[RMDB]
The record gives the reactivity of an RNA of 177 nucleotides to 2A3 and DMS. For 2A3 the reverse transcriptase was SuperScript II with manganese. The 2A3 profile rests on 968 reads. The DMS profile rests on 1,574 reads. For DMS the reverse transcriptase was MarathonRT. The data come from the RNA Mapping Database (RMDB), library OK2TST. The RNA was probed in 150 mM KOAc, 10 mM MgCl2 and 150 mM bicine (pH 8.5) at 24 C.
RNA sequence: GGGAACGACUCGAGUAGAGUCGAAAAACUCGCGCAAUGACCAGGCGGAGGCUUCACGCGCGAUGGCUUCCAGUUGUGCCGCCAGAUGUUCCGCCAGCCAGGCCACUUGCGGCAGCUGUUGCUGCUCAUGCCACCAAGCAUUCGUGCUUGGUGGCAUAAAAGAAACAACAACAACAAC
Reactivity to 2A3 in 0.01 (KOAc 150mM, MgCl2 10mM, bicine 150mM(pH8.5), 24C), signal-to-noise 1, nucleotides 027 to 126: a020c020u000c010g020c000g000c000a010a230u300g100a020c000c050a080g080g010c010g030g020a000g070g030c060u170u120c030a070c050g010c000g000c010g030a040u090g060g040c050u020u000c030c010a050g010u090u060g090u110g050c020c030g000c030c000a020g030a100u100g050u030u010c010c000g000c070c010a030g100c000c020a020g050g000c000c000a040c040u020u050g050c030g020g020c000a010g000c010u070g080u190u230g020c000u020g000c000u030c030
Reactivity to DMS in 0.01 (KOAc 150mM, MgCl2 10mM, bicine 150mM(pH8.5), 24C), signal-to-noise 2, nucleotides 027 to 126: a080c070u010c010g010c020g020c010a130a120u000g000a090c030c050a130g000g000c030g000g000a100g000g000c110u010u000c040a080c280g010c020g010c000g000a020u010g010g010c090u000u000c060c030a070g000u000u000g020u000g030c040c040g020c030c080a050g020a090u000g030u000u000c020c020g000c040c000a170g000c080c080a130g000g000c090c050a060c040u000u000g010c110g010g000c060a060g010c020u000g010u010u010g010c030u000g030c030u010c140